[RMDB]
RNA sequence: GGGAACGACUCGAGUAGAGUCGAAAAGCCUAGGUCCCCUCUGCCCCUUUUACGGCACAGGUUCCAAGCCAGGCUCUUCCACCGCCUUAAAGAGGCUCACCUUUCUUUUCUUUUCUGUGGAAGGGGCUCCUUCAGGGGCUAUGGGCGAUGCAGUGCAGCAGCUAAAUAGUUUCGACUAUUUAGCUGCAAAAGAAACAACAACAACAAC
Reactivity to 2A3 in 0.01 (KOAc 150mM, MgCl2 10mM, bicine 150mM(pH8.5), 24C), signal-to-noise 1, nucleotides 027 to 156: g000c000c000u040a050g000g010u160c000c000c020c000u060c120u080g020c000c000c000c000u000u020u030u030a040c010g000g040c080a000c010a080g050g000u080u100c130c050a060a000g020c010c000a020g000g040c010u000c040u140u090c030c020a020c080c080g050c000c000u180u260a150a180a030g080a140g020g000c000u030c040a060c000c020u000u200u160c070u120u220u290u030c050u030u180u300u060c040u190g000u000g000g000a000a000g000g000g000g000c050u090c010c000u210u140c000a000g000g000g000g000c000u100a130u060g000g010g010c060g030a020u180g070c110a070g070u000g080c020a020